[RMDB]
RNA sequence: GGGAACGACUCGAGUAGAGUCGAAAAUCAAAGAGCGUCGCACACACGCACACUAAGUCUGCUGCAUGCAGAGCCUAAACCGCAGGCUCUGUGUGCGAGAUAUCGUUCAAAAUGCAUGCAGAAAAAACGUUAAGGUAUAGUUCGCUAUACCUUAACGAAAAGAAACAACAACAACAAC
Reactivity to DMS in 0.01 (KOAc 150mM, MgCl2 10mM, bicine 150mM(pH8.5), 24C), signal-to-noise 8, nucleotides 027 to 126: u000c100a090a100a110g010a060g010c020g020u000c050g010c080a030c070a050c110a100c070g000c030a060c080a080c090u000a080a100g000u000c010u000g010c010u000g010c000a010u000g010c000a010g000a010g010c000c000u010a030a070a190c100c110g020c160a020g010g000c000u000c000u000g010u000g010u000g000c010g000a010g010a120u010a060u000c040g020u000u000c030a060a040a060a060u000g000c000a020u010g010c000a030g020a000a070a060a070a060a120
Reactivity to 2A3 in 0.01 (KOAc 150mM, MgCl2 10mM, bicine 150mM(pH8.5), 24C), signal-to-noise 6, nucleotides 027 to 126: u120c050a060a060a020g070a020g010c020g030u030c030g030c040a010c000a010c000a010c060g030c010a030c000a010c100u120a100a060g100u010c020u030g040c010u030g010c020a000u020g000c000a010g000a000g010c000c000u130a210a130a090c060c030g100c130a000g000g000c000u000c000u000g000u000g000u010g000c010g000a000g000a000u200a030u060c030g030u050u050c050a080a060a030a010u050g000c010a010u100g000c020a020g000a050a070a000a000a000a010
Chemical mapping of a 177-nucleotide RNA with DMS and 2A3. 2A3 adducts were read by reverse transcription with SuperScript II with manganese. It was measured as part of the RMDB library M2PK90.